[RMDB]
RNA sequence: GGGAACGACUCGAGUAGAGUCGAAAACAGUUCGAGCAUGAGCCAAUUGCCGAACGAGGAUGGCGCGAGAGGAAGGAUCAGAGGACGAGAGGGGAUGAGAUGGUAAAGAAGCGAGGAACGCCGAGGGGAUGUCUCCCAAGAAGGCAAAGAGAAGGCAGGAAUAACUUAACUUCGGUUAAGUUAUUCCAAAAGAAACAACAACAACAAC
Reactivity to 2A3 in 0.01 (KOAc 150mM, MgCl2 10mM, bicine 150mM(pH8.5), 24C), signal-to-noise 5, nucleotides 027 to 156: c070a030g020u030u020c020g020a060g030c030a010u050g050a040g080c050c060a090a170u090u060g010c000c000g020a020a010c040g010a040g050g030a060u090g040g000c050g010c060g050a060g000a010g070g020a050a010g020g010a010u060c050a040g020a030g060g010a020c050g010a010g020a000g050g000g010g000a010u050g010a020g010a030u060g020g000u080a060a060a030g030a040a000g050c050g040a050g010g020a060a050c050g050c050c020g020a040g000g000g000g010a010u070g070u050c030u040c060c000c000a000a020g060a020a010g030g000c040a060a050a000g040a000g010a050a030g040g010c080a050
Reactivity to DMS in 0.01 (KOAc 150mM, MgCl2 10mM, bicine 150mM(pH8.5), 24C), signal-to-noise 2, nucleotides 027 to 156: c020a120g000u010u010c020g020a240g060c050a000u000g000a260g070c060c110a080a120u000u000g000c030c020g000a060a050c020g000a090g030g020a100u000g020g030c050g060c070g010a100g030a100g030g030a150a090g020g000a070u010c030a070g010a090g020g020a140c060g000a110g000a060g040g000g030g010a070u000g010a100g020a090u000g040g020u010a060a100a090g020a040a080g030c090g000a090g000g020a060a100c080g020c070c010g000a140g030g000g000g000a130u000g020u000c030u000c030c000c030a050a150g000a080a090g010g030c000a030a080a140g000a070g020a060a060g040g000c040a170